Structure probing data (2A3 and DMS) for a 177-nucleotide construct. For 2A3, 6,842 sequencing reads were counted. Conditions: 150 mM KOAc, 10 mM MgCl2 and 150 mM bicine (pH 8.5), 24 C.
RNA sequence: GGGAACGACUCGAGUAGAGUCGAAAAGGAAGAUUUUCAUGCGCGUUAUUCCGCCAUGGCGCGGCGUUAUCGGUAUAUCGUUUAUAAUCAUGAAAUUCGCCCCGCUAUUUUGCGAAAAGCAAUUGGAUACCUAUAGCUGAUUCGUCAGCUAUAGGUAAAAAGAAACAACAACAACAAC
Reactivity to 2A3 in 0.01 (KOAc 150mM, MgCl2 10mM, bicine 150mM(pH8.5), 24C), signal-to-noise 5, nucleotides 027 to 126: g080g010a040a120g020a050u050u010u050u060c020a020u040g010c050g010c010g060u020u040a060u090u050c040c020g030c030c030a050u080g040g000c050g000c050g070g030c040g020u050u060a090u210c020g010g020u070a060u010a010u100c030g020u020u180u070a240u090a110a150u130c030a030u030g020a000a020a050u040u010c000g040c020c000c010c000g000c020u080a200u080u090u060u040g010c010g070a100a020a120a090g010c000a020a030u070u050g090g010a030
Reactivity to DMS in 0.01 (KOAc 150mM, MgCl2 10mM, bicine 150mM(pH8.5), 24C), signal-to-noise 7, nucleotides 027 to 126: g010g010a120a110g010a050u000u000u000u000c010a020u000g010c250g010c020g020u000u000a050u010u000c030c020g020c110c140a160u000g000g000c040g010c140g010g010c060g010u000u010a040u000c110g020g010u000a070u000a030u000c060g020u010u010u000a090u010a120a100u020c020a020u000g000a020a030a050u000u000c010g000c090c000c010c050g020c090u000a060u000u000u000u000g000c010g000a090a050a090a150g000c030a010a050u000u000g000g000a300
DMS adducts were read by reverse transcription with MarathonRT. Values are in units of 0.01, from 0 to 300, in steps of 10. 2A3 adducts were read by reverse transcription with SuperScript II with manganese. Values cover nucleotides 27 to 126.